Notes:
Structure probing data (DMS and 2A3) for a 177-nucleotide construct. The data come from the RNA Mapping Database (RMDB), library OK2TST. For DMS the reverse transcriptase was MarathonRT. The RNA was probed in 150 mM KOAc, 10 mM MgCl2 and 150 mM bicine (pH 8.5) at 24 C.
RNA sequence: GGGAACGACUCGAGUAGAGUCGAAAACAUAGAACCAGUCAAAAUCGCAUAAAGAUUAUCAACCAUCGCCUCAAAUUCAGCACUAUGUUUGUCUCUCGGGCGAGGCAAAUCAACUUGCACGUCUGCAGGUCAUAUAUCAUUUCGAUGAUAUAUGACCAAAAGAAACAACAACAACAAC
Reactivity to DMS in 0.01 (KOAc 150mM, MgCl2 10mM, bicine 150mM(pH8.5), 24C), signal-to-noise 5, nucleotides 027 to 126: c070a080u000a050g030a140a110c070c060a060g010u010c100a040a070a080a060u010c070g010c090a060u010a060a100a110g010a070u000u000a080u000c100a080a090c050c030a050u000c030g000c010c010u000c060a060a050a080u000u000c040a070g020c080a110c070u000a040u000g000u000u010u000g010u000c040u010c020u010c170g010g010g020c080g010a060g010g020c020a030a030a070u010c160a070a110c150u000u000g020c020a060c090g010u000c010u000g010c240a130
Reactivity to 2A3 in 0.01 (KOAc 150mM, MgCl2 10mM, bicine 150mM(pH8.5), 24C), signal-to-noise 6, nucleotides 027 to 126: c010a010u100a020g050a040a050c040c010a010g070u060c020a020a010a040a200u080c050g010c090a050u090a160a140a020g040a060u090u060a070u150c040a020a050c030c010a090u040c020g030c020c020u070c050a070a080a100u120u050c020a030g030c020a020c070u090a060u120g020u020u060u060g040u010c010u000c000u000c000g020g020g000c010g020a070g020g000c020a010a030a020u120c020a010a060c040u020u020g000c020a010c030g050u030c020u040g020c050a050